[RMDB]
Structure probing data (DMS and 2A3) for a 177-nucleotide construct.
The RNA was probed in 150 mM KOAc, 10 mM MgCl2 and 150 mM bicine (pH 8.5) at 24 C.
Reactivities are given for positions 27 through 126.
For DMS, 1,955 sequencing reads were counted.
Values are in units of 0.01, from 0 to 300, in steps of 10.
For DMS the reverse transcriptase was MarathonRT.
It was measured as part of the RMDB library M2PK50.
RNA sequence: GGGAACGACUCGAGUAGAGUCGAAAAGUACCCUUGUUCGCAAGGGUACAAAGACAGACUUCACUGUCAUAAAGAAGGUAACAUCUCAGUAACAAUAAGAGAAAAGCACCUACUUCGGUAGGUGCAAGAAAUACUUUGGGUUCGCCCAAAGUAUUUCAAAAGAAACAACAACAACAAC
Reactivity to DMS in 0.01 (KOAc 150mM, MgCl2 10mM, bicine 150mM(pH8.5), 24C), signal-to-noise 3, nucleotides 027 to 126: g010u000a000c000c000c010u000u000g010u010u010c240g060c020a000a020g000g010g020u010a000c000a030a070a100g010a040c000a030g000a120c030u000u000c040a060c030u010g000u000c170a080u010a020a020a030g010a050a030g030g000u010a160a050c090a100u000c000u000c010a100g010u010a050a050c120a090a070u020a090a090g000a030g000a030a120a140a160g010c000a010c000c010u000a000c000u000u000c160g000g000u000a000g000g000u000g000c000a020a020
Reactivity to 2A3 in 0.01 (KOAc 150mM, MgCl2 10mM, bicine 150mM(pH8.5), 24C), signal-to-noise 2, nucleotides 027 to 126: g010u010a000c000c000c000u000u000g050u020u080c190g000c080a000a000g000g000g030u000a000c000a000a000a000g020a000c000a010g020a030c050u040u060c160a050c110u040g030u020c010a020u240a020a120a020g140a040a020g100g040u120a070a030c020a140u010c010u020c040a060g070u150a060a100c070a130a140u180a230a030g040a000g010a060a120a010a000g000c010a000c000c020u000a000c000u010u070c180g050g000u000a000g010g000u000g000c000a000a000